[RMDB]
RNA sequence: GGGAACGACUCGAGUAGAGUCGAAAAAUCGCAAAGACGCCGAGGUCACCCACGCAACCCACAUCGCACGCUUGGUCACUCGGGGUCCGUGCUAGCGGGCGGCGAACCGGACAUUGUCCGGGACGCCUCUAACGCUAGGUUUCGACCUAGCGUUAGAAAAAGAAACAACAACAACAAC
Reactivity to DMS in 0.01 (KOAc 150mM, MgCl2 10mM, bicine 150mM(pH8.5), 24C), signal-to-noise 1, nucleotides 027 to 126: a040u010c090g010c060a060a140a060g000a030c020g010c000c000g010a070g010g010u000c050a150c100c010c020a050c090g000c070a090a150c070c030c040a090c150a020u010c090g040c030a090c120g000c030u000u000g010g000u000c050a170c030u000c030g010g000g010g020u000c000c100g000u000g020c070u000a070g010c010g010g000g000c170g000g010c010g010a020a250c000c000g000g000a030c010a170u010u010g010u000c000c000g000g000g000a070c010g010c000c010
Reactivity to 2A3 in 0.01 (KOAc 150mM, MgCl2 10mM, bicine 150mM(pH8.5), 24C), signal-to-noise 1, nucleotides 027 to 126: a000u050c040g000c020a080a110a010g000a080c100g110c180c010g000a010g010g090u100c050a090c020c000c000a030c030g010c000a070a110c060c030c000a040c030a180u110c040g060c080a040c080g020c020u010u030g010g040u010c030a000c110u000c000g010g000g030g020u000c010c020g050u060g030c010u030a020g000c040g040g070g000c020g020g000c000g010a010a020c000c000g000g050a010c030a300u300u300g000u000c020c010g020g000g030a010c000g010c010c000